[RMDB]
RNA sequence: GGGAACGACUCGAGUAGAGUCGAAAAAGCACGGUUUUUGAGGACGCAUUUUGUCCGUGCGGUAAUGCCCUCCUUUACACUUUCUCGCAUGGUGCGGGAGUGUGGAGAGGAAACAAAAGCCAGUCUCGAUAGGCGGUUAACUUCGGUUAACCGCCAAGAACCAACCUAUGUUCGCAUAGGUUGGUUCAAAAGAAACAACAACAACAAC
Reactivity to 2A3 in 0.01 (KOAc 150mM, MgCl2 10mM, bicine 150mM(pH8.5), 24C), signal-to-noise 4, nucleotides 027 to 156: a000g010c000a000c020g010g000u010u000u010u000u020g050a070g030g010a010c030g030c110a120u000u010u000u010g010u000c000c000g010u000g000c000g020g030u130a070a050u200g030c000c000c000u020c010c000u060u090u060a000c010a000c000u050u150u010c020u020c000g010c020a100u250g250g050u300g150c000g000g000g000a010g000u000g000u000g010g000a040g010a010g020g000a030a070a000c000a010a000a000a000g080c050c030a040g000u010c000u010c040g070a130u120a130g000g000c000g000g000u000u000a000a000c000u010u050c160g010g000u000u000a000a000c010c000g000c000c000a010a010
Reactivity to DMS in 0.01 (KOAc 150mM, MgCl2 10mM, bicine 150mM(pH8.5), 24C), signal-to-noise 1, nucleotides 027 to 156: a100g000c020a020c000g040g020u000u030u020u020u000g010a040g020g000a070c000g000c100a110u000u000u000u000g020u020c010c000g030u000g000c000g000g030u010a060a060u000g020c030c010c030u000c010c010u000u000u000a050c000a000c010u000u000u010c010u010c020g030c000a300u000g030g050u000g030c000g020g000g010a020g020u000g030u000g020g000a050g000a110g010g020a050a000a040c010a020a030a040a060g020c070c010a200g010u000c020u010c060g010a240u000a150g020g020c020g040g000u000u000a010a000c010u000u010c300g060g010u000u000a000a030c000c010g000c010c000a000a000